Chemical mapping of a 177-nucleotide RNA with 2A3 and DMS. Source: RMDB library M2PK50, as collected in RNAgym. For DMS the reverse transcriptase was MarathonRT.
RNA sequence: GGGAACGACUCGAGUAGAGUCGAAAAUCCGAAGAGUUCGCUCUUCGGAAAAGGGGUUCGAAUCCCGCCCGAACCGCGGGUAGCGGCCCAAAAAUAAAAUAAAAAGCAUAGCGUUCGCGCUAUGCAACUACAUUCUAUCCUUCGGGAUAGAAUGUAGAAAAGAAACAACAACAACAAC
Reactivity to 2A3 in 0.01 (KOAc 150mM, MgCl2 10mM, bicine 150mM(pH8.5), 24C), signal-to-noise 2, nucleotides 027 to 126: u020c000c000g010a000a010g010a000g090u110u120c180g040c070u000c000u000u000c000g000g080a000a000a000a000g020g020g000g000u060u300c040g010a040a070u050c000c000c000g000c050c020c010g030a110a030c040c020g000c030g030g060g070u110a040g100c050g010g040c000c000c030a050a130a010a010a010u180a050a080a020a020u180a020a050a000a030a010g000c000a000u000a000g010c040g020u040u040c280g000c010g010c060u000a000u000g010c010a000a000
Reactivity to DMS in 0.01 (KOAc 150mM, MgCl2 10mM, bicine 150mM(pH8.5), 24C), signal-to-noise 2, nucleotides 027 to 126: u000c000c000g000a020a000g000a040g000u000u020c280g010c020u000c000u010u020c020g000g000a000a000a020a110g030g000g000g000u000u000c130g010a300a150u000c000c000c010g000c020c050c000g030a140a130c180c210g040c020g000g030g020u000a120g000c090g010g000c010c010c010a000a010a050a100a090u000a050a050a050a090u010a040a060a120a200a090g000c000a000u000a010g020c000g010u000u040c260g080c000g010c000u000a000u000g000c020a000a030